Chemical mapping of a 177-nucleotide RNA with 2A3 and DMS. The 2A3 profile rests on 4,589 reads. Conditions: 150 mM KOAc, 10 mM MgCl2 and 150 mM bicine (pH 8.5), 24 C. DMS adducts were read by reverse transcription with MarathonRT. 2A3 adducts were read by reverse transcription with SuperScript II with manganese. The DMS profile rests on 4,086 reads.
RNA sequence: GGGAACGACUCGAGUAGAGUCGAAAAGAUAUGGACCAGGUAGGCCAGCUUUGAUCUCGGAAACGAGGGAGCUGACUACUGGUCCUAAGUCAAAACAUUGGCGCUGAGUUCGCUCAGCGCCAAUGAACUGAAUAGUGAAGUUCGCUUCACUAUUCAGAAAAGAAACAACAACAACAAC
Reactivity to 2A3 in 0.01 (KOAc 150mM, MgCl2 10mM, bicine 150mM(pH8.5), 24C), signal-to-noise 3, nucleotides 027 to 126: g030a020u070a060u140g000g010a000c010c000a020g190g200u070a000g020g150c240c020a010g010c030u300u300u060g090a140u070c000u010c020g000g080a110a080a060c020g000a000g010g020g000a000g000c000u000g010a010c010u000a010c010u010g000g010u000c000c010u010a000a000g000u010c020a000a000a150a180c010a000u000u000g020g000c010g040c010u000g000a010g070u170u240c300g160c180u000c000a000g010c030g030c020c000a020a000u000g000a010a000
Reactivity to DMS in 0.01 (KOAc 150mM, MgCl2 10mM, bicine 150mM(pH8.5), 24C), signal-to-noise 3, nucleotides 027 to 126: g010a040u000a300u010g000g010a010c010c010a010g010g000u000a060g000g010c100c000a000g010c000u000u000u020g010a050u020c000u000c000g000g000a110a130a180c010g010a020g010g010g000a000g010c000u000g010a040c000u000a040c000u000g010g000u000c000c010u010a010a060g010u010c030a120a100a130a200c010a020u000u000g000g010c000g030c000u010g000a040g030u010u000c250g000c000u000c000a000g020c000g010c000c000a010a000u000g000a060a140